[RMDB]
RNA sequence: GGGAACGACUCGAGUAGAGUCGAAAAGAUCGCGGCGCACAAGAACGGAGUCGCGUCAUCGCUCCAACGAAGUCUGGCAGGAGCUUGAGUCGACAGUCCAUGUUCUUGACAAUGGGGUUGACCGGAAUCGCCAUUUUAGUUUCGACUAAAAUGGCGAAAAAGAAACAACAACAACAAC
Reactivity to DMS in 0.01 (KOAc 150mM, MgCl2 10mM, bicine 150mM(pH8.5), 24C), signal-to-noise 2, nucleotides 027 to 126: g010a060u010c010g030c030g010g000c160g010c090a130c010a060a010g000a030a020c080g000g000a300g000u000c000g010c100g020u020c080a050u000c100g000c030u000c000c010a120a100c090g000a170a070g040u010c120u010g010g000c160a180g010g000a020g000c010u000u000g000a100g010u000c010g020a060c050a090g010u000c000c020a100u000g000u000u000c020u010u010g010a140c070a070a160u000g000g010g010g010u000u010g000a140c060c040g000g010a090a090
Reactivity to 2A3 in 0.01 (KOAc 150mM, MgCl2 10mM, bicine 150mM(pH8.5), 24C), signal-to-noise 1, nucleotides 027 to 126: g070a000u050c030g040c010g200g000c000g070c000a070c090a260a060g040a200a020c080g150g000a060g000u040c010g010c000g000u010c000a030u060c020g030c000u000c010c010a020a060c090g130a180a060g120u170c170u240g070g010c060a090g010g030a010g030c020u030u050g000a010g000u060c000g020a010c010a030g120u020c000c000a060u090g000u100u020c090u070u060g050a050c060a080a050u020g000g000g040g020u010u050g030a020c020c000g000g040a060a050
The record gives the reactivity of an RNA of 177 nucleotides to DMS and 2A3. The DMS profile rests on 1,313 reads. For DMS the reverse transcriptase was MarathonRT.